[RMDB]
RNA sequence: GGGAACGACUCGAGUAGAGUCGAAAAGAUAUGGAGCCACUGAGCAACAGCCCAGGGUCGGAAACGACCCAUGGGACAUGCUCUGUGGCUCCUAAGUCAAAUCACGUCGACUUCGGUCGACGUGAAAGUUAGUCAUUAGGUUCGCCUAAUGACUAACAAAAGAAACAACAACAACAAC
Reactivity to 2A3 in 0.01 (KOAc 150mM, MgCl2 10mM, bicine 150mM(pH8.5), 24C), signal-to-noise 4, nucleotides 027 to 126: g000a000u010a010u040g000g000a000g000c010c000a000c020u030g010a010g000c150a110a190c110a250g010c020c000c000a000g000g000g000u000c000g000g010a010a000a000c010g000a010c010c030c010a030u010g000g000g010a000c040a220u300g000c000u000c000u000g000u000g000g000c000u000c000c000u000a000a000g000u000c000a010a000a040u050c000a000c000g000u010c000g010a010c000u050u030c220g150g000u020c000g020a010c010g000u000g000a010a000a000
Reactivity to DMS in 0.01 (KOAc 150mM, MgCl2 10mM, bicine 150mM(pH8.5), 24C), signal-to-noise 4, nucleotides 027 to 126: g000a000u000a010u000g000g000a010g020c000c000a010c000u000g010a020g020c000a190a090c240a130g020c010c000c000a020g000g000g010u000c000g010g000a020a010a020c000g010a020c010c000c000a010u000g010g010g010a010c040a160u010g010c010u010c010u000g010u000g000g000c000u000c000c000u000a000a060g000u010c000a120a160a210u000c000a010c010g000u000c000g010a010c000u000u020c230g040g000u000c000g010a000c000g010u000g000a010a030a090
The record gives the reactivity of an RNA of 177 nucleotides to 2A3 and DMS. The 2A3 profile rests on 20,323 reads. The reactions ran in a buffer of 150 mM KOAc, 10 mM MgCl2 and 150 mM bicine (pH 8.5), at 24 C.